[RMDB]
RNA sequence: GGGAACGACUCGAGUAGAGUCGAAAAGAUUGAUUCAUUAUUUGCAGCAGCCAGGACAGACUGAACCUCGAUUAUACGUCAGAAAUGGAAAAAGCGAUGCAGCUGUCACACGGAAUUGGAUACGAGGCAGCUGUCUUUCGUUCGCGGAAGAUAGCUGAAAAGAAACAACAACAACAAC
Reactivity to DMS in 0.01 (KOAc 150mM, MgCl2 10mM, bicine 150mM(pH8.5), 24C), signal-to-noise 9, nucleotides 027 to 126: g010a120u010u010g000a080u010u010c040a070u020u020a080u020u010u010g010c040a090g010c060a090g010c030c030a050g000g010a140c060a060g000a070c030u010g000a090a070c060c030u010c040g010a090u020u020a060u030a100c160g010u010c030a050g000a070a070a080u010g000g010a040a050a070a070a070g010c040g010a070u020g000c010a040g000c020u000g000u000c040a060c100a120c090g000g000a070a090u020u010g000g000a080u010a070c050g000a070g000g010
Reactivity to 2A3 in 0.01 (KOAc 150mM, MgCl2 10mM, bicine 150mM(pH8.5), 24C), signal-to-noise 9, nucleotides 027 to 126: g110a080u140u190g050a040u090u050c040a030u040u230a080u100u100u150g030c020a040g000c000a000g020c020c010a020g030g030a020c020a030g060a090c020u030g030a050a050c010c010u000c010g000a010u030u060a060u110a130c040g020u020c030a030g100a090a160a060u170g040g050a060a080a040a040a020g060c020g030a030u060g020c000a010g000c020u010g000u060c010a030c010a010c100g060g050a060a070u080u070g060g030a030u040a110c020g010a030g040g010
About this RNA:
The record gives the reactivity of an RNA of 177 nucleotides to DMS and 2A3. The reactions ran in a buffer of 150 mM KOAc, 10 mM MgCl2 and 150 mM bicine (pH 8.5), at 24 C. For 2A3 the reverse transcriptase was SuperScript II with manganese. The data come from the RNA Mapping Database (RMDB), library OK1LIB. As a SHAPE reagent, 2A3 marks flexible, mostly unpaired nucleotides at the ribose 2'-OH. Reactivities are given for positions 27 through 126.